[RMDB]
This 177-nucleotide RNA was probed chemically with 2A3 and DMS. In probing experiments dimethyl sulfate is read out at A N1 and C N3, which are open when not base-paired. It was measured as part of the RMDB library M2PK50. Values cover nucleotides 27 to 126. For DMS, 5,592 sequencing reads were counted. Conditions: 150 mM KOAc, 10 mM MgCl2 and 150 mM bicine (pH 8.5), 24 C.
RNA sequence: GGGAACGACUCGAGUAGAGUCGAAAACCUCCAGAGUUCGCUCUGGAGGAAAAGCUAGCGUCCUAAUCUAUCCCGGGUUAUGGCGCGAAACUCAGCGAAAAAAAAGGUACGGCUUCGGCCGUACCAACGAGCAUAUAUAGUUCGCUAUAUAUGCUCGAAAAGAAACAACAACAACAAC
Reactivity to 2A3 in 0.01 (KOAc 150mM, MgCl2 10mM, bicine 150mM(pH8.5), 24C), signal-to-noise 4, nucleotides 027 to 126: c010c000u000c000c000a010g000a010g010u070u110c140g070c050u010c000u000g000g010a000g000g000a010a050a010a000g070c060u120a030g000c000g010u020c000c000u010a010a000u000c010u010a060u050c020c010c000g010g000g000u000u010a020u030g020g000c000g000c010g010a030a010a020c130u160c140a060g090c080g190a140a030a010a010a010a010a040a070g000g000u000a000c000g000g010c020u030u120c210g080g000c000c000g000u000a000c000c000a000a000
Reactivity to DMS in 0.01 (KOAc 150mM, MgCl2 10mM, bicine 150mM(pH8.5), 24C), signal-to-noise 4, nucleotides 027 to 126: c000c010u000c010c000a010g000a020g020u000u010c230g010c000u000c000u000g010g000a020g010g000a010a010a060a080g010c060u000a190g000c000g010u000c000c030u000a000a000u000c000u000a080u000c010c010c010g010g010g000u000u000a010u000g000g010c000g020c000g000a060a060a080c080u000c110a110g020c110g010a010a010a000a070a080a050a150a100g000g020u000a000c000g010g020c000u000u010c230g030g010c000c000g010u000a000c000c000a020a020